RNA sequence: GGGAACGACUCGAGUAGAGUCGAAAAUUAUGUCUUCUUCAAGGUAUUAAAAGGCAGUAUAUUGUAACGCUUAAGAGUCCUGGACUCUGGAGCCAGACCUCUUGGGUUUAAACCCUGACCUCACUUCUUACUAUCUCUGUGACCUUGGACAAGUUACAUACACAUAAGUUUUCGAACUUAUGUGUAUAAAAGAAACAACAACAACAAC
Reactivity to DMS in 0.01 (KOAc 150mM, MgCl2 10mM, bicine 150mM(pH8.5), 24C), signal-to-noise 3, nucleotides 027 to 156: u000u000a060u000g000u000c040u000u000c040u000u000c020a060a070g020g010u000a080u000u010a040a070a050a030g020g020c030a060g010u000a100u000a080u000u010g020u010a060a090c150g000c040u010u000a070a060g010a050g020u010c020c080u000g050g000a030c010u000c060u000g030g020a070g020c000c050a130g010a050c060c010u010c010u000u010g010g010g010u000u000u000a080a090a150c050c010c000u000g000a070c030c020u000c050a090c070u000u010c080u000u000a070c030u020a090u000c000u010c050u000g010u000g010a030c010c010u000u000g020g000a060c060a040a080g000u000u000a080c110
Reactivity to 2A3 in 0.01 (KOAc 150mM, MgCl2 10mM, bicine 150mM(pH8.5), 24C), signal-to-noise 5, nucleotides 027 to 156: u120u060a080u130g030u010c000u060u010c000u050u060c060a040a030g030g000u050a070u120u190a210a130a020a010g020g000c000a010g050u070a090u030a050u250u200g090u090a090a030c050g010c030u040u020a020a000g010a000g010u020c030c040u040g010g030a060c010u040c160u300g060g030a050g000c000c000a000g020a060c020c000u000c010u020u020g010g000g010u040u060u120a050a070a030c040c000c000u030g160a250c020c010u040c010a040c030u090u070c010u050u090a060c030u070a060u110c080u000c020u060g070u040g060a020c000c000u010u010g000g000a010c000a010a030g000u020u060a020c020